[RMDB]
RNA sequence: GGGAACGACUCGAGUAGAGUCGAAAAGCGGUUUCGACCGCGUUGUAGAUAUGGAAGCAGAGAAAUCCCAUGGCUUGGACCAGGAAUCGGAAACGAUUCCUGCUAGCCAUGAACUUUCGACGAAGCUUCCUAAGUCCGGCUCUCAGUUCGCUGAGAAGACAUACACUGUAUUCGUACAGUGUAUGUCAAAAGAAACAACAACAACAAC
Reactivity to 2A3 in 0.01 (KOAc 150mM, MgCl2 10mM, bicine 150mM(pH8.5), 24C), signal-to-noise 5, nucleotides 027 to 156: g010c020g030g030u050u110u260c280g110a050c010c000g000c010g000u020u100g050u050a090g020a080u040a030u190g000g000a010a010g000c020a010g050a000g010a090a010a030u140c040c030c000a000u000g000g000c010u090u150g050g050a160c130c030a010g000g010a000a000u010c000g000g050a060a070a050c000g010a000u000u000c000c000u000g000c000u000a000g000c000c000a000u000g000a000a030c000u020u010u010c040g130a220c080g050a210a010g000c000u010u000c000c000u000a080a000g030u010c030c010g050g000c020u000c000u000c010a050g050u120u100c140g030c120u050g030a030g030a120a060
Reactivity to DMS in 0.01 (KOAc 150mM, MgCl2 10mM, bicine 150mM(pH8.5), 24C), signal-to-noise 4, nucleotides 027 to 156: g030c010g020g020u000u000u010c200g000a050c000c010g010c010g000u000u000g000u000a070g020a120u000a300u010g000g010a040a030g080c010a160g000a300g010a040a040a040u010c020c010c030a260u010g010g010c010u000u010g060g000a120c300c010a010g010g020a020a000u000c000g020g010a200a110a250c010g000a020u000u000c000c000u010g010c010u000a020g000c020c000a000u000g000a010a030c040u000u000u000c020g010a250c120g000a190a200g010c010u000u000c010c000u010a060a100g010u000c010c020g010g000c040u000c010u000c010a060g060u010u010c190g030c030u000g010a090g000a130a240